[RMDB]
RNA sequence: GGGAACGACUCGAGUAGAGUCGAAAAAGCGGCGUACGCGCCGCAUAUUACAUGAUGAAUAAGCUUCUACGAAUCACGACGGUCUUCUGACAUUAUCAAUGGAGAUGGUAGAACGUUCUGAUCUCAACCAUGUAUUCUCGUUCGCGAGAAUACAUGGAAAAGAAACAACAACAACAAC
Reactivity to DMS in 0.01 (KOAc 150mM, MgCl2 10mM, bicine 150mM(pH8.5), 24C), signal-to-noise 4, nucleotides 027 to 126: a080g010c020g020g000c000g070u020a070c170g030c020g040c000c000g000c010a000u020a010u010u010a130c190a130u020g010a110u000g000a070a060u020a100a140g000c120u000u010c010u000a060c070g010a100a070u020c010a060c140g000a100c130g000g010u020c020u010u000c070u010g000a100c080a060u020u030a070u020c160a120a030u040g000g010a040g010a050u020g000g010u010a020g030a050a040c040g000u010u010c100u010g000a080u000c030u000c050a080a270
Reactivity to 2A3 in 0.01 (KOAc 150mM, MgCl2 10mM, bicine 150mM(pH8.5), 24C), signal-to-noise 9, nucleotides 027 to 126: a000g010c020g010g000c020g020u050a050c200g010c000g000c050c000g000c000a010u030a010u020u060a060c090a090u160g050a040u060g030a060a090u170a140a040g050c050u040u000c010u030a060c070g060a100a050u080c040a030c120g070a030c050g060g040u000c010u080u010c020u080g050a040c040a100u140u220a210u240c100a070a140u140g070g000a080g000a040u070g040g040u020a020g000a030a000c010g010u050u000c020u020g080a090u010c050u000c070a010a080